Structure probing data (DMS) for a 177-nucleotide construct.
RNA sequence: GGGAACGACUCGAGUAGAGUCGAAAAGAUAUGGAUGCGUGUGUGUGGAGGGUUCCUCUACCCACCUUACCGGUCGGAAACGACCGACUAAGAGGAGGAGACCCUCCACACACACGCAUCCUAAGUCCUAAGAGAGUAGGUUCGCCUACUCUCUUAGAAAAGAAACAACAACAACAAC
Reactivity to DMS in 0.01 (KOAc 150mM, MgCl2 10mM, bicine 150mM(pH8.5), 24C), signal-to-noise 1, nucleotides 027 to 126: g000a120u010a300u000g030g010a010u000g000c040g100u000g000u010g000u000g010u000g040g020a050g060g030g010u000u000c030c010u000c000u010a050c070c080c140a300c180c000u000u010a030c060c030g000g000u000c000g010g010a140a120a200c050g020a030c010c000g000a040c240u000a010a010g020a130g000g020a080g010g000a070g010a070c000c000c000u000c000c000a000c020a000c000a010c000a000c000g000c000a000u010c000c000u030a010a050g000u000c040

About this RNA
It was measured as part of the RMDB library TTRINS. For DMS the reverse transcriptase was MarathonRT. The reactions ran in a buffer of 150 mM KOAc, 10 mM MgCl2 and 150 mM bicine (pH 8.5), at 24 C. For DMS, 1,471 sequencing reads were counted. Reactivities are given for positions 27 through 126.